[RMDB]
RNA sequence: GGGAACGACUCGAGUAGAGUCGAAAAGUUUAAGCCUCUCCCAAUUUUCUAGUAACCUCACUGGGCUAGACGGGGCUCAAUAUACCUCUUCACCAAUGGCAUGGCUUCUGAUCACAUCUGGUGUCACUCCAAAGUACCUAUUCGUAGGUACUUUGGAAAAAGAAACAACAACAACAAC
Reactivity to DMS in 0.01 (KOAc 150mM, MgCl2 10mM, bicine 150mM(pH8.5), 24C), signal-to-noise 6, nucleotides 027 to 126: g020u000u020u010a060a090g000c040c010u000c050u000c010c000c030a110a110u020u020u010u010c020u000a030g010u010a100a150c040c010u000c150a070c120u000g000g010g000c020u000a040g010a060c300g010g000g000g000c030u000c060a020a060u010a080u010a090c040c020u010c050u000u000c060a060c050c050a030a080u010g000g000c030a060u000g000g000c010u000u000c040u000g000a070u000c040a030c060a090u010c050u000g010g020u000g010u000c090a090c120
Reactivity to 2A3 in 0.01 (KOAc 150mM, MgCl2 10mM, bicine 150mM(pH8.5), 24C), signal-to-noise 9, nucleotides 027 to 126: g020u030u070u140a080a020g020c010c000u030c020u030c000c010c020a020a080u120u100u060u020c030u020a050g020u050a130a120c000c010u070c060a110c150u110g000g020g000c010u010a010g010a030c040g010g000g000g000c010u020c030a120a070u130a020u050a150c010c020u030c030u070u050c030a040c050c020a030a090u040g010g000c030a040u040g050g000c030u080u020c040u070g080a080u040c030a020c010a090u020c050u060g040g000u030g030u040c030a030c040